[RMDB]
RNA sequence: GGGAACGACUCGAGUAGAGUCGAAAAUAAUAAGCAUAUCGAGUUCCCAUGUAUUUUCGUAGCCCUGCGGCUGUAACAUUACAGCUUAGUAAGAAUGCUACCUAACGAUAGCUAGCCGCAGGAUUAACCUGCAAUAAGGGUUCGCCCUUAUUGCAGGAAAAGAAACAACAACAACAAC
Reactivity to DMS in 0.01 (KOAc 150mM, MgCl2 10mM, bicine 150mM(pH8.5), 24C), signal-to-noise 2, nucleotides 027 to 126: u000a060a100u000a010a000g000c030a130u000a080u000c040g010a170g000u010u000c010c000c010a180u000g020u010a050u010u000u000u000c120g020u020a060g000c120c010c020u020g010c000g010g020c000u000g000u020a110a110c250a110u020u000a000c000a130g030c050u000u000a060g010u010a000a010g000a080a070u010g000c010u000a010c030c010u020a080a150c250g000a040u010a010g000c010u010a040g010c010c030g000c010a000g000g000a030u020u010a070a140
Reactivity to 2A3 in 0.01 (KOAc 150mM, MgCl2 10mM, bicine 150mM(pH8.5), 24C), signal-to-noise 1, nucleotides 027 to 126: u100a020a060u060a040a030g060c040a050u080a050u120c090g020a010g120u000u000c000c020c000a000u060g020u030a180u000u110u040u020c140g040u080a000g040c000c000c050u020g000c010g030g000c030u080g050u060a120a020c080a100u010u010a000c030a010g000c050u060u010a050g000u000a040a020g030a100a030u130g010c010u010a040c020c000u130a170a050c070g060a090u020a030g000c030u010a000g020c000c020g030c000a000g000g000a010u000u000a000a010
Structure probing data (DMS and 2A3) for a 177-nucleotide construct. It was measured as part of the RMDB library M2PK90. Conditions: 150 mM KOAc, 10 mM MgCl2 and 150 mM bicine (pH 8.5), 24 C. For DMS, 1,574 sequencing reads were counted.